Chemical mapping of a 177-nucleotide RNA with 2A3 and DMS.
It was measured as part of the RMDB libraries RFM100 and RFMREP.
DMS adducts were read by reverse transcription with MarathonRT.

RNA sequence: GGGAACGACUCGAGUAGAGUCGAAAAUCGAAGAUGAUAUAGGCAACAUAUGUCAUAUACCUUGCUGUAUAUGACACAGCACUCCGCGACAGGACCAGGCUCGUCCUGUCUCAUCGUCGCACUAUGGAAUAAUGUACGUAUUCGUACGUACAUUAUUAAAAGAAACAACAACAACAAC
Reactivity to 2A3 in 0.01 (KOAc 150mM, MgCl2 10mM, bicine 150mM(pH8.5), 24C), signal-to-noise 9, nucleotides 027 to 126: u120c020g020a030a020g030a030u050g040a010u050a030u080a210g060g000c030a080a040c020a200u170a070u150g000u000c000a000u000a000u000a010c020c060u170u300g070c220u090g070u000a000u000a000u010g020a000c000a000c000a000g010c010a030c050u060c040c040g060c030g040a010c020a020g020g000a010c040c050a080g100g050c090u080c100g050u050c000c000u000g010u000c000u000c000a020u020c010g040u010c010g020c030a050c070u110a100u190g090g050
Reactivity to DMS in 0.01 (KOAc 150mM, MgCl2 10mM, bicine 150mM(pH8.5), 24C), signal-to-noise 9, nucleotides 027 to 126: u020c030g000a050a040g010a040u000g000a040u010a070u020a090g010g010c140a130a100c150a120u010a140u000g000u000c000a010u000a000u000a000c000c050u020u010g010c220u020g010u000a000u000a000u000g000a010c000a020c160a040g000c110a100c140u010c060c060g010c150g010a030c040a040g000g000a020c050c120a120g010g010c110u010c180g000u010c000c000u000g000u000c010u000c020a020u000c030g010u000c010g000c250a110c110u010a060u020g010g010